[RMDB]
RNA sequence: GGGAACGACUCGAGUAGAGUCGAAAAGCAUACCUGCCCACCGGGAGAGAUCAGCAUCGAUCUGUGGCUUGUAGUAGAAGGACUUGUUCUCUUCACCGAUCUUAUCGAACUCGUGUGCGAAGGUAGCACCAGGGUGCUAAUUCGUUAGCACCCUGGUAAAAGAAACAACAACAACAAC
Reactivity to DMS in 0.01 (KOAc 150mM, MgCl2 10mM, bicine 150mM(pH8.5), 24C), signal-to-noise 4, nucleotides 027 to 126: g030c040a090u000a030c010c000u010g010c060c150c010a050c020c040g010g000g000a050g000a300g000a030u000c040a030g020c230a010u000c040g000a050u010c130u000g010u000g000g010c080u000u000g010u020a080g010u010a080g010a140a070g010g000a050c070u000u000g000u010u010c020u000c030u000u000c070a070c060c010g020a020u000c020u000u000a060u000c020g020a300a260c030u010c010g020u010g020u000g010c170g020a180a050g000g000u000a020g040c040
Reactivity to 2A3 in 0.01 (KOAc 150mM, MgCl2 10mM, bicine 150mM(pH8.5), 24C), signal-to-noise 3, nucleotides 027 to 126: g000c020a100u010a040c010c010u030g050c020c010c000a020c000c010g000g020g000a030g010a000g000a020u020c030a010g060c050a040u040c010g040a040u000c060u060g090u060g100g040c090u100u180g110u100a100g010u020a030g020a090a020g060g040a030c040u120u150g070u260u040c070u020c000u040u060c030a030c040c000g000a000u000c010u010u030a010u010c000g000a020a010c000u010c000g070u160g000u000g180c020g030a000a000g010g010u020a010g000c000

Annotation: An RNA of 177 nucleotides, treated with DMS and 2A3 and read out base by base. It was measured as part of the RMDB library OK2TST. DMS adducts were read by reverse transcription with MarathonRT. The reactions ran in a buffer of 150 mM KOAc, 10 mM MgCl2 and 150 mM bicine (pH 8.5), at 24 C.